[RMDB]
RNA sequence: GGGAACGACUCGAGUAGAGUCGAAAAAGCGUAGCGGUACGCCGCUACGCAAGGCGCAUUUGAACUGUAUUGUACGCCUUGCAUAAAGCAAAAGUACUAAAAAAACCUGCCGUUACGACGGCACGAAAAAACAUCCAUUGGUUCGCCAAUGGAUGAACUGGGAUAGAACGUUCGCGUUCUAUCCCAGAAAAGAAACAACAACAACAAC
Reactivity to 2A3 in 0.01 (KOAc 150mM, MgCl2 10mM, bicine 150mM(pH8.5), 24C), signal-to-noise 1, nucleotides 027 to 156: a010g030c010g000u010a000g000c010g000g000u030a020c230g020c040c010g000c020u000a000c020g070c010a000a000g000g000c010g080c050a090u030u050u300g110a110a050c070u110g060u230a030u080u110g010u050a030c020g020c000c000u000u000g000c010a090u110a130a150a060g000c020a000a000a060a000g040u020a020c130u260a000a030a050a000a000a020a040c000c000u000g000c000c000g000u010u030a050c180g010a000c000g020g000c050a000c040g030a100a070a000a000a000a030c000a000u010c000c000a000u000u010g000g000u020u060c060g000c020c000a000a010u030g000g000a000u000g000a000a010
An RNA of 207 nucleotides, treated with 2A3 and read out base by base. For 2A3, 710 sequencing reads were counted. The RNA was probed in 150 mM KOAc, 10 mM MgCl2 and 150 mM bicine (pH 8.5) at 24 C.